[RMDB]
RNA sequence: GGGAACGACUCGAGUAGAGUCGAAAAACCCUUGAGUUAGCGGCUCAGGUGGAUUCGUCUAUCCUAUGGCCGAUCCCCUUGGAGGGAACCGUUUUAUUGCAUGACCGUCGAUGUUACCGCAUCGGCGAGAGUCCAAGAGUUUCGACUCUUGGACUCUAAAAGAAACAACAACAACAAC
Reactivity to 2A3 in 0.01 (KOAc 150mM, MgCl2 10mM, bicine 150mM(pH8.5), 24C), signal-to-noise 2, nucleotides 027 to 126: a000c010c000c000u020u100g110a130g090u070u250a030g020c020g000g010c000u030c030a050g010g090u160g030g000a020u100u080c060g000u000c090u040a150u260c010c000u110a160u120g010g000c000c030g000a050u030c010c000c010c000u020u120g200g060a120g040g020g030a010a030c000c000g010u040u070u100u170a190u130u160g110c170a140u110g120a110c060c010g000u020c000g010a000u000g010u060u140a070c000c080g000c020a000u000c000g000g000c000g010
Reactivity to DMS in 0.01 (KOAc 150mM, MgCl2 10mM, bicine 150mM(pH8.5), 24C), signal-to-noise 2, nucleotides 027 to 126: a050c000c010c000u030u000g000a130g000u020u000a120g000c000g000g000c040u000c230a060g010g060u000g000g000a000u000u050c260g030u010c020u000a030u070c030c040u000a020u000g000g010c020c050g000a070u030c030c030c090c080u000u020g010g000a100g000g000g000a050a090c160c040g000u000u010u000u000a090u040u030g030c050a010u000g040a110c150c010g020u000c000g000a000u020g000u010u060a180c300c170g000c020a020u000c000g010g000c000g000
Structure probing data (2A3 and DMS) for a 177-nucleotide construct. High 2A3 reactivity points to a flexible backbone, as in loops and unpaired stretches. The 2A3 profile rests on 1,098 reads. The RNA was probed in 150 mM KOAc, 10 mM MgCl2 and 150 mM bicine (pH 8.5) at 24 C.